Chemical mapping of a 177-nucleotide RNA with DMS and 2A3. Reactivities are given for positions 27 through 126. It was measured as part of the RMDB library RFM100. For DMS the reverse transcriptase was MarathonRT. The reactions ran in a buffer of 150 mM KOAc, 10 mM MgCl2 and 150 mM bicine (pH 8.5), at 24 C.

RNA sequence: GGGAACGACUCGAGUAGAGUCGAAAAAAGCAAAUCCCCGCCGAGCCGGAGGCCGGACCUGAUCCGGCAGCAAUCUCGCACUUGCACAAAUCCAUAUUGCACUGCAAUAUGGACUGGGCGGGAAUGCAAGGCUGUUCAAUUUCGAUUGAACAGCCUUAAAAGAAACAACAACAACAAC
Reactivity to DMS in 0.01 (KOAc 150mM, MgCl2 10mM, bicine 150mM(pH8.5), 24C), signal-to-noise 2, nucleotides 027 to 126: a080a040g000c060a070a100a080u040c090c000c010c210g030c010c050g030a030g000c180c050g040g000a100g000g040c010c010g000g000a070c140c140u000g000a070u000c040c020g030g000c050a110g050c000a010a030u000c000u000c070g000c000a180c070u000u000g020c090a070c250a130a020a210u010c000c010a000u000a000u000u000g000c000a140c300u110g000c000a040a000u000a000u000g010g010a020c070u000g000g030g000c020g000g030g000a060a020u000g000c040
Reactivity to 2A3 in 0.01 (KOAc 150mM, MgCl2 10mM, bicine 150mM(pH8.5), 24C), signal-to-noise 2, nucleotides 027 to 126: a010a000g060c030a040a020a020u020c010c000c010c010g000c040c020g030a010g060c030c010g070g000a010g050g000c000c000g090g010a020c000c130u120g030a160u010c000c000g050g000c000a000g000c020a040a050u020c010u010c020g000c010a080c120u030u110g010c080a020c090a100a140a060u010c010c000a000u000a000u000u020g000c180a190c300u300g000c000a010a000u020a000u020g000g000a020c010u010g000g000g000c000g000g000g000a010a010u020g000c020